[RMDB]
RNA sequence: GGGAACGACUCGAGUAGAGUCGAAAAAAAAUGAGUGCGUGGUAGCACAAACCAGACCAAUCUUCGGCACAUGGUCGCACAAGUACAGCUUCGCCUGUUCAAAGCGAACAACAACAACAACAAGCAAUCUAGCAGAAGUAUUCGUACUUCUGCUAGAAAAAGAAACAACAACAACAAC
Reactivity to DMS in 0.01 (KOAc 150mM, MgCl2 10mM, bicine 150mM(pH8.5), 24C), signal-to-noise 3, nucleotides 027 to 126: a040a000a100a070u020g010a180g020u000g000c010g020u010g040g010u010a150g000c080a040c040a030a080a140c040c020a140g020a040c030c020a040a070u010c090u000u020c120g020g000c060a070c140a110u010g020g020u000c020g020c130a010c090a060a110g010u000a030c020a040g010c100u000u010c050g020c060c000u000g000u000u010c160a050a070a140g040c020g010a020a020c030a010a030c000a030a020c020a030a020c050a040a020c050a090a130g010c220a080a050
Reactivity to 2A3 in 0.01 (KOAc 150mM, MgCl2 10mM, bicine 150mM(pH8.5), 24C), signal-to-noise 2, nucleotides 027 to 126: a000a000a000a060u090g000a000g010u020g010c010g020u050g020g090u200a050g090c040a020c040a060a060a020c000c000a020g040a030c000c010a040a060u060c020u100u080c040g070g010c060a040c020a180u080g040g040u050c030g020c040a060c000a030a090g120u060a050c010a000g000c030u030u060c050g030c070c030u030g090u170u150c080a100a040a020g030c040g000a000a000c000a000a000c000a000a000c010a000a010c000a000a010c000a020a020g140c030a000a110